Overview:
An RNA of 207 nucleotides, treated with 2A3 and read out base by base. The reactions ran in a buffer of 150 mM KOAc, 10 mM MgCl2 and 150 mM bicine (pH 8.5), at 24 C.
RNA sequence: GGGAACGACUCGAGUAGAGUCGAAAACGAACCUCACGAUACUGAGGGGAUAGGUAACCUGCGCGUUAUCUGUUCUGGGUUCACCGUCACACUCAUCCAUUUAUAGGAUGUAUUAUUUAUCAGCGAUGAGUGAAAGAAUACACUUCAUUUAGGGUACAGAGGUAUCAGUGUUCGCACUGAUACCUCUAAAAGAAACAACAACAACAAC
Reactivity to 2A3 in 0.01 (KOAc 150mM, MgCl2 10mM, bicine 150mM(pH8.5), 24C), signal-to-noise 1, nucleotides 027 to 156: c040g000a010a080c000c000u070c000a010c080g200a140u200a300c040u070g000a070g040g000g000g020a000u070a010g010g000u000a000a000c000c140u300g010c030g060c080g040u000u000a000u080c020u040g000u000u000c100u100g030g090g000u110u040c120a170c060c000g160u180c010a000c000a000c190u000c000a000u000c000c000a020u000u200u030a160u250a060g120g000a020u000g000u040a000u000u140a000u000u140u060a220u170c130a000g080c000g000a000u000g000a010g040u100g080a070a150a000g040a010a030u090a020c080a000c000u020u050c080a010u060u060u190a070g170g030g020u020a020c100